This 207-nucleotide RNA was probed chemically with DMS and 2A3. Conditions: 150 mM KOAc, 10 mM MgCl2 and 150 mM bicine (pH 8.5), 24 C. For 2A3, 2,961 sequencing reads were counted. For DMS, 2,496 sequencing reads were counted.
[RMDB]
RNA sequence: GGGAACGACUCGAGUAGAGUCGAAAAGAAUCCCUUCUCGAGGUUCGUUUACUUUAAGGCCUGCCUUAAGUAAGUGGUGUUGACGUUUGGGUCCUGCGCAAUGGGAAUUCAUGAACCAUGUCAGGUCCGGAAGGAAGCAGCAUUAAGUGAAACCUCUCUCAUUUAUCAAGUUCGCUUGAUAAAUGAGAAAAGAAACAACAACAACAAC
Reactivity to DMS in 0.01 (KOAc 150mM, MgCl2 10mM, bicine 150mM(pH8.5), 24C), signal-to-noise 2, nucleotides 027 to 156: g010a190a190u000c010c000c000u030u000c040u000c040g030a010g040g030u000u000c030g000u000u010u010a030c040u010u010u000a050a060g020g000c060c060u000g020c000c000u010u000a050a060g010u000a040a070g040u010g000g010u000g020u000u000g010a300c100g000u000u000u010g020g010g030u020c000c000u000g000c240g000c030a090a110u020g010g010g000a110a100u000u010c220a170u020g000a260a250c020c030a050u000g000u030c030a030g020g030u000c000c010g020g050a100a030g000g000a250a090g020c020a040g000c040a060u020u000a060a140g030u000g000a070a050a030c000c000u010c040u000
Reactivity to 2A3 in 0.01 (KOAc 150mM, MgCl2 10mM, bicine 150mM(pH8.5), 24C), signal-to-noise 5, nucleotides 027 to 156: g100a030a130u050c020c000c000u010u040c060u040c050g020a010g000g010u020u010c010g020u030u050u010a020c010u050u090u190a030a010g030g010c080c110u180g050c150c000u080u000a010a010g000u000a040a030g000u030g070g070u010g030u060u040g090a120c110g010u030u040u070g080g000g020u100c010c000u020g000c040g000c110a130a220u030g010g020g060a090a110u250u190c070a090u210g030a040a030c000c000a010u010g020u010c000a000g000g010u000c010c020g010g040a050a010g030g020a020a020g020c010a000g010c000a010u040u050a140a030g050u030g180a100a050a050c000c000u000c000u000